[RMDB]
RNA sequence: GGGAACGACUCGAGUAGAGUCGAAAAAUAAAGCACGGCAAGCACAUGAAGCACAUGAAGCAGUACAAGCACAUGAAGCAGUACAAGCACUACAAGCAGUAGAAGCAGCCGAAGCACAUCAAAAAAACAGUUAUUGAUUCUUCGGAAUCAAUAACUGAAAAGAAACAACAACAACAAC
Reactivity to DMS in 0.01 (KOAc 150mM, MgCl2 10mM, bicine 150mM(pH8.5), 24C), signal-to-noise 1, nucleotides 027 to 126: a050u000a020a060a120g010c050a100c090g000g000c040a010a170g030c140a090c050a100u010g010a090a140g030c010a070c060a040u010g010a090a070g010c000a060g030u000a070c100a070a020g020c010a010c090a060u000g010a070a140g000c050a050g010u000a040c080a040a060g000c030a170c020u020a030c070a020a060g020c070a090g000u000a000g000a110a110g000c100a080g020c050c070g000a040a050g000c010a020c090a010u010c080a010a000a000a070a070a040a160
Reactivity to 2A3 in 0.01 (KOAc 150mM, MgCl2 10mM, bicine 150mM(pH8.5), 24C), signal-to-noise 1, nucleotides 027 to 126: a010u170a040a110a010g020c000a040c020g000g020c020a030a030g030c020a030c000a060u040g110a100a010g040c010a060c000a130u040g040a070a010g010c000a000g040u060a020c040a110a000g000c020a010c000a120u140g060a110a000g010c020a010g010u030a020c050a050a040g060c000a000c040u070a020c040a090a000g140c030a000g070u100a010g030a070a010g040c000a000g020c000c000g040a010a000g080c040a030c000a070u200c130a020a000a060a050a000a030a030
Chemical mapping of a 177-nucleotide RNA with DMS and 2A3. The reactions ran in a buffer of 150 mM KOAc, 10 mM MgCl2 and 150 mM bicine (pH 8.5), at 24 C. For DMS the reverse transcriptase was MarathonRT. Values are in units of 0.01, from 0 to 300, in steps of 10. For 2A3 the reverse transcriptase was SuperScript II with manganese.